[RMDB]
RNA sequence: GGGAACGACUCGAGUAGAGUCGAAAAGUGGCAUACUUCGGUAUGCCACAAACCAGACCCUAUCUGGAACACGCUCUUCUGCGUGAUCCCAAGUAGAUCCCAAAAGUCGUGGGUUCGCCCACGACAACCAAUCUGCUCAGUUCGCUGAGCAGAUUGGAAAAGAAACAACAACAACAAC
Reactivity to 2A3 in 0.01 (KOAc 150mM, MgCl2 10mM, bicine 150mM(pH8.5), 24C), signal-to-noise 2, nucleotides 027 to 126: g000u000g010g010c010a010u010a020c000u020u040c180g100g010u000a000u010g000c020c000a000c010a000a000a000c000c000a010g070a000c030c000c010u030a030u040c020u030g010g020a020a010c000a010c020g040c010u030c070u300u180c170u180g020c000g010u010g030a100u040c020c010c000a060a020g020u010a000g030a100u030c010c010c000a020a090a000a060g010u010c000g000u000g000g020g000u020u010c240g090c000c010c000a000c000g000a010c000a000a000
Reactivity to DMS in 0.01 (KOAc 150mM, MgCl2 10mM, bicine 150mM(pH8.5), 24C), signal-to-noise 1, nucleotides 027 to 126: g030u000g000g020c000a010u000a030c010u000u000c220g020g000u000a000u000g010c000c000a000c010a000a030a110c120c070a120g000a100c050c080c010u010a060u010c030u000g010g040a060a100c010a010c040g000c000u020c300u000u010c120u000g000c010g010u000g010a100u010c000c020c010a050a030g010u000a010g000a210u010c000c030c010a080a110a050a040g030u010c000g040u000g010g000g010u000u050c250g000c030c000c000a000c010g010a000c000a070a050
Background:
Structure probing data (2A3 and DMS) for a 177-nucleotide construct. It was measured as part of the RMDB library M2PK50. Conditions: 150 mM KOAc, 10 mM MgCl2 and 150 mM bicine (pH 8.5), 24 C.